[RMDB]
RNA sequence: GGGAACGACUCGAGUAGAGUCGAAAACAGUCCAAUGCUUCACUUAGCCAUUUUACCUCACCCCCACUGGUGUUCGCCGACCGUUGACUAUUCUCUACAAACCACAAAGACAUUUGAACACUAUACCGCAUGGGAUCAGUUUCGACUGAUCCCAUGCAAAAGAAACAACAACAACAAC
Reactivity to DMS in 0.01 (KOAc 150mM, MgCl2 10mM, bicine 150mM(pH8.5), 24C), signal-to-noise 1, nucleotides 027 to 126: c180a050g050u020c000c000a060a010u030g000c020u000u020c050a190c030u010u000a120g010c000c010a060u000u000u050u090a050c000c020u000c020a070c060c070c020c000c050a030c000u020g000g000u000g000u020u000c020g020c140c010g000a240c010c050g020u000u000g010a040c070u000a070u030u000c020u010c010u000a130c050a140a000a050c070c060a000c040a020a090a090g000a020c080a120u000u000u040g000a060a010c020a050c180u000a080u020a020c140c010
Reactivity to 2A3 in 0.01 (KOAc 150mM, MgCl2 10mM, bicine 150mM(pH8.5), 24C), signal-to-noise 4, nucleotides 027 to 126: c040a020g100u000c000c020a010a020u060g050c050u030u000c030a030c060u050u100a020g020c030c000a110u060u010u020u150a100c040c000u020c040a060c010c010c020c000c000a030c030u020g020g000u050g020u050u060c060g000c020c010g000a080c010c000g020u020u020g000a010c020u030a100u110u010c010u000c000u030a050c100a030a110a030c020c030a040c030a060a080a020g070a060c040a050u110u090u160g070a080a000c040a010c030u060a060u060a120c020c090